[RMDB]
RNA sequence: GGGAACGACUCGAGUAGAGUCGAAAAGUAGAAUCUGUCAAGCAAAACCCCAAAACCUUACACUGAGAGCAUUUAGCCUGAUUACUCUUUAAAUCAAAUCAGGCAAUAGAGAGAAACUCGAGAGAUGAAACGGGAGUAAUGUUCGCAUUACUCCCAACCCGUUGCUUAUGUUCGCAUAAGCAACGGGAAAAGAAACAACAACAACAAC
Reactivity to 2A3 in 0.01 (KOAc 150mM, MgCl2 10mM, bicine 150mM(pH8.5), 24C), signal-to-noise 1, nucleotides 027 to 156: g070u050a020g050a080a050u060c070u120g050u100c040a080a000g000c010a050a060a090a290c000c000c000c020a010a030a010a010c050c070u120u110a110c140a080c040u190g110a010g000a000g070c000a020u020u020u020a000g000c000c000u000g000a000u010u000a010c000u000c000u080u300u080a040a080a040u140c150a000a040a000u030c020a020g020g000c000a010a000u030a000g080a000g020a020g020a050a020a040c000u000c000g000a000g010a050g030a040u120g080a100a070a020c080g000g000g000a000g000u000a010a000u000g030u060u020c160g000c030a000u000u000a000c000u000c000c000c000a000a000
Structure probing data (2A3) for a 207-nucleotide construct. The RNA was probed in 150 mM KOAc, 10 mM MgCl2 and 150 mM bicine (pH 8.5) at 24 C. Values cover nucleotides 27 to 156. The 2A3 profile rests on 470 reads.